[RMDB]
RNA sequence: GGGAACGACUCGAGUAGAGUCGAAAAUAAAGCUGCGUAAGUUCAGUUGAGCCUGAAUUUUAAGUGAUACUAUCUAGCUUAGAAUUUGGUCAUUUUUGAUAGUGUAGAUUGAAAUUUGACAAAUUUUAAUUGAAAUUAAAGUCUUAGUCUAGCUUGAGUCCUGAUCAUAGUUCGCUAUGAUCAGGACAAAAGAAACAACAACAACAAC
Reactivity to 2A3 in 0.01 (KOAc 150mM, MgCl2 10mM, bicine 150mM(pH8.5), 24C), signal-to-noise 1, nucleotides 027 to 156: u140a000a090a040g020c020u050g040c070g060u130a120a170g010u170u030c010a000g000u040u080g040a000g050c000c050u030g070a010a020u020u020u000u000a000a000g000u010g020a020u020a110c000u000a000u010c000u000a000g000c000u020u000a020g010a040a000u030u050u210g090g040u110c110a200u030u170u140u210u280g020a020u000a000g000u000g010u000a000g000a010u000u010g000a000a000a000u000u020u030g000a010c000a010a040a000u000u100u000u000a010a000u030u030g020a030a000a050u110u120a140a200a020g010u030c000u010u180a020g050u060c100u060a110g000c000u010u000g010a040